Conditions: 150 mM KOAc, 10 mM MgCl2 and 150 mM bicine (pH 8.5), 24 C. The record gives the reactivity of an RNA of 207 nucleotides to DMS and 2A3. The 2A3 profile rests on 7,945 reads.
RNA sequence: GGGAACGACUCGAGUAGAGUCGAAAACACAAACCUAAUAUAUGUAGCGUGGUGCUUGGCUUUCAGUAGUUCUCACUUUCAUACAUUGUGCAUUGAUACUUCUAAACCUCCUUUUGUAUGCAGAAUUCAGUCUCUUAUACAUCACCACCAGUCAACAACCACUAGUACUAUUCGUAGUACUAGUGGUAAAAGAAACAACAACAACAAC
Reactivity to DMS in 0.01 (KOAc 150mM, MgCl2 10mM, bicine 150mM(pH8.5), 24C), signal-to-noise 4, nucleotides 027 to 156: c070a100c060a090a070a170c040c030u000a100a140u000a140u000a070u020g020u000a060g020c050g050u000g020g020u000g010c060u000u000g030g030c030u000u000u000c040a100g000u010a070g010u000u030c020u000c020a120c110u010u000u000c040a110u000a070c060a120u000u010g020u000g000c070a100u000u000g000a130u000a070c050u000u000c050u000a040a070a060c030c020u000c030c020u000u000u000u000g030u010a020u000g030c060a080g010a060a150u000u000c070a090g010u000c020u000c030u000u000a110u000a060c050a070u000c020a050c030c010a070c020c020a120g020u000c050a050a090c070a130
Reactivity to 2A3 in 0.01 (KOAc 150mM, MgCl2 10mM, bicine 150mM(pH8.5), 24C), signal-to-noise 9, nucleotides 027 to 156: c080a010c030a040a160a090c040c040u160a190a070u120a070u070a040u210g090u110a050g030c050g050u020g000g030u020g030c060u060u040g030g010c030u020u110u070c050a060g020u060a010g020u100u020c020u020c020a030c020u080u140u100c060a050u070a110c020a050u050u110g030u040g070c030a050u020u080g050a040u080a150c030u050u060c040u140a080a110a130c010c010u080c020c020u040u070u030u080g050u040a030u070g020c060a010g030a090a060u090u060c000a010g060u000c010u010c000u030u040a050u030a110c040a030u030c010a020c020c010a010c000c000a010g110u070c020a010a040c000a020
Record summary:
For DMS the reverse transcriptase was MarathonRT.